Structure probing data (2A3) for a 177-nucleotide construct. The 2A3 profile rests on 693 reads.
RNA sequence: GGGAACGACUCGAGUAGAGUCGAAAAGCUAAAGACUUCGGUCUUUAGCAAAUAAAUUCAGGUGAUUUGCUACCUUUAAGUGCAGCAAGAAAUUCAAAAAUAAAACAACGAGGUUCGCCUCGUUGAACAACCGAUGACAGUUCGCUGUCAUCGGUUGAAAAGAAACAACAACAACAAC
Reactivity to 2A3 in 0.01 (KOAc 150mM, MgCl2 10mM, bicine 150mM(pH8.5), 24C), signal-to-noise 1, nucleotides 027 to 126: g020c010u010a050a000a010g000a000c010u040u160c200g090g010u000c000u000u000u000a000g000c010a000a000a000u050a000a010a030u070u150c070a000g000g020u000g160a300u020u100u170g010c020u000a010c060c000u090u120u240a000a000g040u050g000c030a030g000c000a000a010g190a170a060a040u240u160c100a110a100a000a090a140u270a090a070a030a020c000a000a010c000g000a010g050g010u070u080c130g040c000c000u000c000g000u010u000g000a000a010
Source: RMDB library M2PK50, as collected in RNAgym. The RNA was probed in 150 mM KOAc, 10 mM MgCl2 and 150 mM bicine (pH 8.5) at 24 C. For 2A3 the reverse transcriptase was SuperScript II with manganese.